This 177-nucleotide RNA was probed chemically with 2A3 and DMS. The data come from the RNA Mapping Database (RMDB), library OK1LIB. Conditions: 150 mM KOAc, 10 mM MgCl2 and 150 mM bicine (pH 8.5), 24 C. Reactivities are given for positions 27 through 126.
RNA sequence: GGGAACGACUCGAGUAGAGUCGAAAAACACCGCAGGACACAGGACCACAAGAUUGCCAAACAAUCCUUGCGACCCUUCUGCACCGUUUGCAACCGCUACUUCAAAACCCCUCGCAAGUUUGUGGAGAUGUGACUACCUUUUCGAAGGUAGUCACAUAAAAGAAACAACAACAACAAC
Reactivity to 2A3 in 0.01 (KOAc 150mM, MgCl2 10mM, bicine 150mM(pH8.5), 24C), signal-to-noise 4, nucleotides 027 to 126: a000c040a010c010c030g000c030a020g010g040a040c020a010c020a110g060g050a050c010c000a000c030a020a030g030a100u020u070g090c050c040a030a050a090c010a010a040u050c030c040u020u090g000c020g030a100c030c000c000u040u060c030u040g000c020a020c010c050g060u050u070u100g050c030a040a020c020c010g010c020u080a040c010u050u080c020a030a060a080a170c020c000c000c000u010c020g000c010a030a070g020u060u050u060g120u080g020g060a120g000
Reactivity to DMS in 0.01 (KOAc 150mM, MgCl2 10mM, bicine 150mM(pH8.5), 24C), signal-to-noise 3, nucleotides 027 to 126: a120c070a090c000c000g030c070a060g010g000a080c080a080c090a100g000g000a090c000c030a080c040a100a030g020a040u010u000g030c040c180a070a100a120c050a030a020u010c060c010u020u000g010c040g000a090c040c030c010u020u050c030u030g020c040a050c030c060g000u010u020u000g000c060a090a080c040c070g010c060u020a070c040u010u010c110a070a010a090a100c010c000c010c010u000c050g000c110a030a040g020u040u000u010g010u000g000g000a020g010